The record gives the reactivity of an RNA of 177 nucleotides to 2A3 and DMS. The data come from the RNA Mapping Database (RMDB), library OK2TRN. Reactivities are given for positions 27 through 126.
RNA sequence: GGGAACGACUCGAGUAGAGUCGAAAAGUGGCGGUUCCGGUACUCGUACUGGAACAGCAGCCAGAGCUACGUGCUAACCAAGGGCUGGAGCCGCUUCGUCAAGGAGAAGGGUCUCCACGCCGGCGACCGAUGCCUAGUCAUUCGUGACUAGGCAUCGAAAAGAAACAACAACAACAAC
Reactivity to 2A3 in 0.01 (KOAc 150mM, MgCl2 10mM, bicine 150mM(pH8.5), 24C), signal-to-noise 2, nucleotides 027 to 126: g070u030g020g000c040g000g000u020u000c000c000g040g010u050a060c080u140c280g060u020a000c000u000g030g000a000a010c030a000g080c010a010g000c000c000a020g000a000g070c010u070a060c210g170u300g010c020u070a060a080c030c010a030a090g030g020g000c030u010g000g000a000g010c000c000g140c100u020u000c020g150u090c080a150a140g080g040a090g080a050a080g130g000g040u000c030u000c020c000a000c060g020c020c010g010g060c030g050a030c000
Reactivity to DMS in 0.01 (KOAc 150mM, MgCl2 10mM, bicine 150mM(pH8.5), 24C), signal-to-noise 3, nucleotides 027 to 126: g040u000g010g030c010g010g010u000u000c000c000g000g030u000a020c040u020c300g010u000a020c000u010g000g010a000a010c010a020g000c040a130g030c000c010a040g020a100g000c010u010a080c160g030u020g010c010u000a090a140c050c010a120a300g010g000g020c010u000g000g010a050g020c010c000g000c010u000u020c020g000u000c300a170a170g010g000a060g000a040a090g010g000g000u000c000u010c000c000a020c180g020c010c000g000g020c170g000a090c190

About this RNA: The RNA was probed in 150 mM KOAc, 10 mM MgCl2 and 150 mM bicine (pH 8.5) at 24 C. The 2A3 profile rests on 2,184 reads.